[RMDB]
RNA sequence: GGGAACGACUCGAGUAGAGUCGAAAAGCACGUCUUCAGUCACCGCGCUGACCGGCUCCACUGAAGAAUCGCAGUUCUAAGCAACAACAACCGUUGCUGACUGUAGGCCGGAUAAGGCGUUCACGCAUAUGCCAUUAGUAUUCGUACUAAUGGCAUAAAAAGAAACAACAACAACAAC
Reactivity to 2A3 in 0.01 (KOAc 150mM, MgCl2 10mM, bicine 150mM(pH8.5), 24C), signal-to-noise 6, nucleotides 027 to 126: g020c020a000c040g010u010c000u040u030c020a030g010u050c030a060c300c110g040c050g010c040u020g010a040c000c000g000g020c010u060c070c030a120c110u160g090a160a030g010a160a080u140c100g000c010a000g010u080u040c060u160a110a000g000c000a000a010c000a030a040c030a050a070c060c080g010u010u010g000c000u000g010a010c000u000g010u050a060g020g010c010c010g030g020a070u120a170a040g010g010c000g000u050u070c070a050c110g120c030a020
Reactivity to DMS in 0.01 (KOAc 150mM, MgCl2 10mM, bicine 150mM(pH8.5), 24C), signal-to-noise 9, nucleotides 027 to 126: g020c100a050c080g010u000c010u000u000c020a020g010u000c090a120c140c160g020c110g010c060u000g000a250c080c010g010g000c020u010c150c150a070c100u010g000a070a070g000a060a090u010c140g000c030a030g000u000u000c140u010a090a030g010c000a010a010c010a090a120c190a100a110c300c150g000u000u000g010c000u000g000a040c020u000g010u000a100g010g010c020c010g000g000a140u010a060a070g010g000c010g000u000u000c070a070c100g010c140a160

Notes
Source: RMDB library OK2TST, as collected in RNAgym. Structure probing data (2A3 and DMS) for a 177-nucleotide construct. 2A3 adducts were read by reverse transcription with SuperScript II with manganese.